About this RNA
The data come from the RNA Mapping Database (RMDB), library RNAMAK. Structure probing data (DMS and 2A3) for a 207-nucleotide construct. Reactivities are given for positions 27 through 156. The DMS profile rests on 4,018 reads. The 2A3 profile rests on 9,881 reads.
RNA sequence: GGGAACGACUCGAGUAGAGUCGAAAAGGGGUCGCAUCCGAUGGCCAGCAGAGGUGUGGCUGAAGCCUCCACGGCCACACUACCCACCUGCUGGAACUACCAUCGAGCCAUGCGACGGAGGCACCCAAAGUGUACUGUUCUUCGGAACAGUACACAAGUAAAGUACUAGGUUCGCCUAGUACUUUACAAAAGAAACAACAACAACAAC
Reactivity to DMS in 0.01 (KOAc 150mM, MgCl2 10mM, bicine 150mM(pH8.5), 24C), signal-to-noise 3, nucleotides 027 to 156: g020g030g030g040u000c000g020c010a080u010c030c020g020a070u000g020g020c000c000a010g010c020a020g000a140g030g020u000g010u000g000g030c020u000g000a070a130g030c010c000u000c000c000a300c150g010g000c000c000a010c020a030c000u000a050c020c010c060a300c060c010u010g030c010u000g000g010a040a040c040u000a300c060c010a050u000c000g000a050g000c060c080a050u010g020c000g020a050c030g030g020a050g060g000c000a040c020c010c010a110a110a130g000u010g000u000a010c000u010g000u000u000c010u000u000c280g020g020a020a010c000a020g000u000a000c010a000c000a010a170
Reactivity to 2A3 in 0.01 (KOAc 150mM, MgCl2 10mM, bicine 150mM(pH8.5), 24C), signal-to-noise 4, nucleotides 027 to 156: g060g000g020g010u010c010g000c000a000u020c010c000g000a000u010g010g010c000c010a000g010c000a000g000a010g010g010u020g000u020g010g000c010u010g010a040a010g010c010c000u000c000c000a020c010g000g020c020c000a000c010a000c000u040a040c060c070c020a050c000c000u000g000c000u000g010g080a010a010c100u260a070c010c000a000u000c000g000a010g050c070c010a010u010g000c000g000a000c000g010g000a000g010g000c000a030c000c000c000a070a150a020g000u000g000u000a000c000u000g020u010u000c010u040u100c270g080g000a000a000c000a000g000u000a000c000a000c000a000a010